RNA sequence: GGGAACGACUCGAGUAGAGUCGAAAAAAACUUUUGUGACUUGCCGAAACGGGACUAAUCUCCUCACCGAGGCUAAGCAAGUAAAAUACGCCUCUCAUAUCCUUACCUGAGGGUGGUAAGGAAAUAACCUGCAACGCUUCCUUCGGGAAGCGUUGAACAGUUUGAUAAUGUUCGCAUUAUCAAACUGAAAAGAAACAACAACAACAAC
Reactivity to 2A3 in 0.01 (KOAc 150mM, MgCl2 10mM, bicine 150mM(pH8.5), 24C), signal-to-noise 4, nucleotides 027 to 156: a000a000a010c110u160u100u070u100g060u030g030a050c010u030u030g000c000c010g060a120a080a050c030g020g000g000a010c040u080a050a100u040c010u010c040c010u050c030a070c030c070g020a010g020g020c020u040a040a010g010c010a020a030g030u120a050a050a050a020u110a050c040g030c010c010u020c010u020c040a050u050a070u250c010c000u010u000a010c000c010u050g050a110g010g080g000u030g000g000u000a000a000g000g000a000a030a000u020a010a020c020c070u060g030c010a010a000c000g000c000u010u000c000c000u010u060c150g030g000g000a000a000g010c000g000u000u000g000a000a010
Reactivity to DMS in 0.01 (KOAc 150mM, MgCl2 10mM, bicine 150mM(pH8.5), 24C), signal-to-noise 1, nucleotides 027 to 156: a110a040a060c060u000u000u000u010g000u000g020a100c030u010u000g000c000c030g010a080a090a070c090g000g000g050a070c050u010a130a150u000c040u000c000c000u020c070a130c040c030g020a160g010g030c040u000a130a050g010c020a000a040g020u000a040a020a040a050u020a040c080g020c030c010u000c010u000c090a160u010a090u000c010c000u000u000a010c000c000u000g000a120g030g020g040u000g030g020u000a000a000g030g000a020a050a030u020a040a080c070c090u000g010c000a020a010c000g000c010u010u010c000c020u000u010c300g040g000g020a020a000g010c000g010u000u000g000a070a110